RNA sequence: GGGAACGACUCGAGUAGAGUCGAAAAUACAACAAGUGUGGGGCUCGCCUAAGCAUGGAUGAUUCCGUCAAAAUACCCUUUCUGUUAAAGGACAUUCCGGAGAAAACUCACGAACAGAUUUGGAGUGAACCGGGUGAAAAUUCGUUUUCACCCGGUUAAAAGAAACAACAACAACAAC
Reactivity to 2A3 in 0.01 (KOAc 150mM, MgCl2 10mM, bicine 150mM(pH8.5), 24C), signal-to-noise 2, nucleotides 027 to 126: u230a030c030a070a000c020a060a070g040u030g010u040g200g060g010g030c050u040c010g060c010c030u020a050a040g100c020a040u080g050g000a020u170g000a030u150u000c000c010g070u090c040a210a040a000a000u170a110c020c020c000u000u020u030c020u000g060u040u080a090a060a000g070g000a000c000a090u030u050c010c010g000g040a030g090a080a100a000a000c010u010c030a030c040g010a150a000c020a030g060a040u090u140u260g080g000a090g000u060g020
Reactivity to DMS in 0.01 (KOAc 150mM, MgCl2 10mM, bicine 150mM(pH8.5), 24C), signal-to-noise 2, nucleotides 027 to 126: u100a110c100a110a070c130a080a080g000u000g030u000g010g000g010g010c000u000c040g040c040c040u000a070a070g040c050a210u080g000g000a040u000g000a140u010u000c010c020g000u050c080a020a030a070a130u010a210c000c010c000u010u010u000c030u000g000u000u000a000a100a100g000g020a050c050a070u000u000c010c040g010g030a100g010a040a050a060a060c100u000c080a030c100g000a010a040c140a040g000a110u000u010u000g000g020a100g000u010g010

The record gives the reactivity of an RNA of 177 nucleotides to 2A3 and DMS. The 2A3 profile rests on 1,086 reads. The data come from the RNA Mapping Database (RMDB), library OK1LIB.